[RMDB]
Source information
Structure probing data (2A3) for a 207-nucleotide construct. For 2A3, 514 sequencing reads were counted. It was measured as part of the RMDB library OK3TST. 2A3 adducts were read by reverse transcription with SuperScript II with manganese. Reactivities are given for positions 27 through 156.
RNA sequence: GGGAACGACUCGAGUAGAGUCGAAAAGAGACUCGAACAUAUCUAUCGCUCUCAACAAAAGUCGCACCAACUGACGUUGGCGUAUUUCCACUUAUCUCAAAUGUCGAACAGCUUGUUGAGCAAGCCAAAGAUAUUGUAAGUGAACUUCGGGCAGCAGCCACUCACCGUUGUUCGCAACGGUGAGUGGAAAAGAAACAACAACAACAAC
Reactivity to 2A3 in 0.01 (KOAc 150mM, MgCl2 10mM, bicine 150mM(pH8.5), 24C), signal-to-noise 1, nucleotides 027 to 156: g020a000g010a010c000u000c070g070a040a050c030a100u180a010u020c000u000a020u100c010g000c000u070c000u020c040a000a030c030a020a070a000a050g070u090c020g000c050a010c010c000a010a020c010u180g170a060c180g020u000u000g060g000c070g030u060a240u010u050u060c040c000a060c050u080u120a170u100c090u030c160a030a110a050u100g060u180c010g090a100a070c010a010g000c020u030u000g010u030u150g030a050g070c030a050a010g030c010c010a080a120a020g030a030u020a030u030u140g030u050a070a040g030u050g100a030a050c020u030u030c020g000g050g050c000a050g070c020a020g020